Structure probing data (DMS) for a 177-nucleotide construct. DMS (dimethyl sulfate) methylates the pairing face of unpaired adenines and cytosines. It was measured as part of the RMDB library TTRDES.
RNA sequence: GGGAACGACUCGAGUAGAGUCGAAAAGAUAUGGAUACUACAUCCCCCAGACAACAGCUAUCAUCGGAAACGAUGAUAGACAUGUCUAUGUGAGUAUCCUAAGUCAAAAGGUCACUUCGGUGACCAAGUGUAUCGGUAGGUUCGCCUACCGAUACACAAAAGAAACAACAACAACAAC
Reactivity to DMS in 0.01 (KOAc 150mM, MgCl2 10mM, bicine 150mM(pH8.5), 24C), signal-to-noise 1, nucleotides 027 to 126: g010a080u020a060u000g000g000a010u000a010c010u010a010c020a180u020c010c010c010c090c300a100g000a020c020a120a080c240a220g010c000u010a000u020c010a020u010c000g000g000a090a080a100c000g030a020u010g000a000u000a000g020a030c050a160u010g000u000c030u010a050u000g000u000g010a010g000u010a000u010c000c000u000a010a180g020u000c020a150a110a060a140g000g010u000c000a000c010u000u000c130g020g000u000g000a020c020c010a010a000